[RMDB]
RNA sequence: GGGAACGACUCGAGUAGAGUCGAAAAUCUGUGUGCUGUAAGGGGCAUCUCAGAGUGCCACCCCCACAUCUCCAAAGCUGCUGGACCUUGCAUAUGGGAGCUGACUCUCUUGGGGCUGGUGUGACUCAUGUUUCUUGUAAUUCGUUACAAGAAACAUAAAAGAAACAACAACAACAAC
Reactivity to 2A3 in 0.01 (KOAc 150mM, MgCl2 10mM, bicine 150mM(pH8.5), 24C), signal-to-noise 6, nucleotides 027 to 126: u030c010u010g030u000g010u020g020c010u020g050u170a120a110g160g040g020g000c020a050u040c060u020c090a040g040a030g020u100g060c010c000a050c020c000c000c020c000a040c010a060u050c050u010c020c020a070a080a030g030c030u050g000c010u030g050g060a100c010c020u060u080g010c040a070u080a070u220g030g000g020a020g000c020u040g050a140c010u030c010u000c010u060u050g020g000g000g010c020u020g000g040u070g040u050g050a030c010u010c090
Reactivity to DMS in 0.01 (KOAc 150mM, MgCl2 10mM, bicine 150mM(pH8.5), 24C), signal-to-noise 9, nucleotides 027 to 126: u000c020u000g010u000g010u010g010c020u000g010u010a110a120g010g010g000g010c010a020u010c070u000c070a040g000a060g010u000g000c030c030a200c060c000c010c010c020a140c140a060u000c040u000c030c040a050a090a090g010c070u000g010c030u000g010g000a100c070c030u000u000g010c100a080u000a080u010g000g010g000a060g010c090u000g000a090c060u000c040u000c070u000u000g010g000g010g010c090u000g000g010u010g010u000g000a110c080u000c110